Source information
An RNA of 207 nucleotides, treated with DMS and 2A3 and read out base by base. Source: RMDB library RNAMAK, as collected in RNAgym. The 2A3 profile rests on 17,339 reads. Conditions: 150 mM KOAc, 10 mM MgCl2 and 150 mM bicine (pH 8.5), 24 C.
RNA sequence: GGGAACGACUCGAGUAGAGUCGAAAACAAGUAUUUCGAUACUUGGCUAACCUUUGUGACGCAUGCACAGCGAUAAGAUAUUAUGGACCCAUUGGGUCCAUUAUAUCUUUUGACGCUGGGGUGCGUCACUCUGGUGACAUUGAAGCUUCGGCUUCAACUUAGAUCAAUGUUUCGACAUUGAUCUAAGAAAAGAAACAACAACAACAAC
Reactivity to DMS in 0.01 (KOAc 150mM, MgCl2 10mM, bicine 150mM(pH8.5), 24C), signal-to-noise 4, nucleotides 027 to 156: c010a010a020g010u000a020u000u000u010c260g020a100u010a010c010u000u000g010g010c030u000a120a030c000c000u000u000u000g020u010g010a030c000g020c000a020u000g030c020a090c010a020g020c010g030a180u010a010a010g010a010u000a010u000u010a020u000g010g050a030c000c000c000a300u000u010g060g040g030u000c000c000a000u000u000a010u000a000u000c000u000u000u010u000g020a210c070g020c010u000g000g000g030g020u000g010c000g000u000c010a000c000u010c030u000g000g010u000g000a060c050a120u010u000g000a030a110g000c010u000u000c290g060g010c010u000u000c010a040a090
Reactivity to 2A3 in 0.01 (KOAc 150mM, MgCl2 10mM, bicine 150mM(pH8.5), 24C), signal-to-noise 9, nucleotides 027 to 156: c000a000a000g000u000a020u030u250u220c240g110a020u010a010c000u010u010g030g050c050u080a050a030c000c000u010u010u010g010u000g000a000c000g050c010a000u150g150c080a060c000a190g010c000g020a020u010a060a000g000a000u000a000u030u010a000u010g000g000a000c020c060c200a270u090u300g040g000g000u010c000c000a000u000u000a000u000a000u000c000u000u020u010u030g050a020c010g000c000u000g000g010g020g000u000g000c000g000u000c000a000c000u000c000u000g000g010u020g010a030c070a160u020u070g000a010a000g010c000u040u090c270g110g000c000u000u000c040a010a010